[RMDB]
RNA sequence: GGGAACGACUCGAGUAGAGUCGAAAAAGAAUCUCCUUCGGGAGAUUCUGAACCACUAAGCUGAUUGCGGAUGACGACGAGGGAGCUCGUGUCGAGCAACCACCGAGAACAGGUUCGCCUGUUCUAAACACGUCGAUAAGUUCGCUUAUCGACGUGUAAAAGAAACAACAACAACAAC
Reactivity to DMS in 0.01 (KOAc 150mM, MgCl2 10mM, bicine 150mM(pH8.5), 24C), signal-to-noise 2, nucleotides 027 to 126: a010g000a020a000u000c000u000c000c000u000u010c230g000g010g010a000g010a000u000u010c000u000g000a060a260c020c020a080c190u010a120a120g020c110u000g000a050u000u000g020c050g000g000a140u010g000a060c050g020a040c020g000a060g000g010g030a190g010c010u010c020g000u000g010u010c030g020a190g000c040a020a090c010c020a010c130c080g000a040g000a010a010c010a000g000g000u000u000c180g000c010c010u000g000u000u000c000u000a030a140
Reactivity to 2A3 in 0.01 (KOAc 150mM, MgCl2 10mM, bicine 150mM(pH8.5), 24C), signal-to-noise 1, nucleotides 027 to 126: a000g010a010a010u010c020u000c020c000u040u060c150g070g000g000a000g010a000u000u000c000u000g010a000a020c000c010a040c110u150a120a050g040c050u010g050a070u040u080g010c020g060g070a110u170g000a050c100g030a000c010g020a070g060g000g100a150g200c010u000c020g030u040g070u110c040g000a020g020c020a000a020c020c010a070c040c040g130a010g010a010a000c000a000g030g000u010u010c120g110c000c000u000g000u020u000c000u000a000a000
This 177-nucleotide RNA was probed chemically with DMS and 2A3. For 2A3, 1,534 sequencing reads were counted. Values cover nucleotides 27 to 126. High DMS reactivity at an A or C suggests that its Watson-Crick edge is free. DMS adducts were read by reverse transcription with MarathonRT. 2A3 adducts were read by reverse transcription with SuperScript II with manganese.